An RNA of 207 nucleotides, treated with 2A3 and read out base by base. For 2A3 the reverse transcriptase was SuperScript II with manganese. Reactivities are given for positions 27 through 156.

[RMDB]
RNA sequence: GGGAACGACUCGAGUAGAGUCGAAAAACUGUCCCCUCUGCCCUGGACUCCGCAUGGCCUCCAAAAGCCAGCUUGCCCUCCGGGUGCUGCAGGGGCUUUGCAGGUGGGGAAGGCUCUGGUGGGUGCCUUUGGUGGCUUCCGUGACAUCAGCCGUGCAGGUAUUACCGGUAUUCGUACCGGUAAUACCAAAAGAAACAACAACAACAAC
Reactivity to 2A3 in 0.01 (KOAc 150mM, MgCl2 10mM, bicine 150mM(pH8.5), 24C), signal-to-noise 1, nucleotides 027 to 156: a010c020u040g090u290c020c000c000c010u000c010u040g010c000c010c000u020g020g000a040c050u040c080c050g000c040a200u020g010g000c020c000u160c090c010a050a080a000a010g010c000c000a020g030c010u080u100g020c010c000c020u040c040c040g060g000g000u040g000c000u010g000c010a020g020g000g000g000c000u070u100u120g020c020a040g020g010u050g010g050g010g000a060a070g020g000c020u000c040u090g000g050u040g020g000g060u060g000c020c000u070u050u130g160g020u040g050g000c010u130u050c030c070g050u070g030a050c000a090u080c010a020g060c030c040g080u120g030c100a080
Source: RMDB library OK3TST, as collected in RNAgym. Conditions: 150 mM KOAc, 10 mM MgCl2 and 150 mM bicine (pH 8.5), 24 C.